[RMDB]
RNA sequence: GGGAACGACUCGAGUAGAGUCGAAAAAUGGAAUCCGCGCUGGUGACUUACCCAUCUGGCCGCAUGUUCAUUCAGGCCGUCGUAACCUGUACGGCCACCGACGUCGCGGAUGACGACGAAGUUUAAAAACGUAGGACGGCACGCCUGAAAAAUGGCGAUUCGUCCUACAAUUCGUUGUAGGACGAAUAAAAGAAACAACAACAACAAC
Reactivity to DMS in 0.01 (KOAc 150mM, MgCl2 10mM, bicine 150mM(pH8.5), 24C), signal-to-noise 3, nucleotides 027 to 156: a100u010g000g000a120a070u000c010c020g030c050g030c040u000g020g010u000g020a090c060u020u000a140c060c030c010a150u010c040u000g030g010c010c010g030c050a060u000g000u010u000c070a190u000u010c030a140g000g040c020c040g000u000c080g010u010a100a080c090c040u000g030u000a070c040g000g000c010c000a070c070c020g030a130c050g000u010c000g020c010g030g020a090u000g010a090c030g010a110c030g010a060a110g010u010u000u000a050a060a020a080a070c040g010u000a050g030g000a060c010g000g000c110a110c020g030c000c010u000g000a040a130a160a120a130u000g000g020c020g000
Reactivity to 2A3 in 0.01 (KOAc 150mM, MgCl2 10mM, bicine 150mM(pH8.5), 24C), signal-to-noise 3, nucleotides 027 to 156: a000u070g000g020a010a020u020c040c020g020c050g010c120u090g000g050u060g050a100c060u100u160a100c030c000c030a080u070c060u070g020g000c020c000g020c100a080u120g080u090u090c070a090u140u040c080a090g030g000c030c000g000u000c000g060u050a080a110c000c030u070g070u140a040c020g000g000c000c010a040c010c030g050a070c050g000u120c010g010c010g030g030a050u060g010a010c000g000a000c030g030a080a050g020u040u180u300a130a100a030a010a000c060g000u030a060g030g050a020c000g010g000c050a020c020g000c010c000u010g040a010a010a000a010a010u200g000g000c000g010